Notes: Conditions: 150 mM KOAc, 10 mM MgCl2 and 150 mM bicine (pH 8.5), 24 C. Chemical mapping of a 207-nucleotide RNA with 2A3 and DMS. 2A3 adducts were read by reverse transcription with SuperScript II with manganese. DMS (dimethyl sulfate) methylates the pairing face of unpaired adenines and cytosines. For 2A3, 930 sequencing reads were counted.
[RMDB]
RNA sequence: GGGAACGACUCGAGUAGAGUCGAAAAGCUAGUCGGAGACGACUAGCAACGAUCAGUUCGCUGAUCGGAACGUGCAUUCAAAUACGCUAGAAGCACGAAUAGGCGACGCAAAGCGUAAAACUGAGAAAGCAGAUAACAAAAAUAAAAAGGCGUCGCGAUUUAAUUUAGGCUUCGGCCUAAAUUAAAUAAAAGAAACAACAACAACAAC
Reactivity to 2A3 in 0.01 (KOAc 150mM, MgCl2 10mM, bicine 150mM(pH8.5), 24C), signal-to-noise 2, nucleotides 027 to 156: g000c010u010a000g000u000c000g000g050a080g020a130c000g000a000c000u000a000g000c000a000a030c010g000a000u000c010a000g030u000u080c130g030c080u010g000a000u010c000g020g030a070a000c010g010u020g050c070a250u000u030c000a010a070a070u080a040c030g020c010u020a010g000a020a000g020c000a000c010g020a090a020u160a170g130g000c010g020a000c020g000c090a160a070a010g010c000g010u020a040a000a050a080c030u040g020a050g140a170a050a030g170c030a020g050a060u180a140a040c070a060a070a110a010a000u190a090a130a050a000a010g100g010c010g000u000c000g000c010g010
Reactivity to DMS in 0.01 (KOAc 150mM, MgCl2 10mM, bicine 150mM(pH8.5), 24C), signal-to-noise 1, nucleotides 027 to 156: g010c010u000a010g050u000c010g030g010a300g010a300c000g030a050c000u000a010g020c000a030a060c000g000a010u000c000a030g030u000u000c280g070c010u010g010a030u000c000g050g010a060a120c070g010u000g000c020a230u010u000c010a080a040a200u000a070c070g000c020u000a190g010a140a100g010c000a010c000g000a150a100u000a150g020g000c030g000a030c000g000c010a240a080a070g010c010g010u000a010a080a130a270c030u000g000a130g020a050a160a200g000c040a070g040a190u010a130a210c090a030a040a070a150a100u010a030a040a050a160a060g000g000c050g110u000c000g000c010g000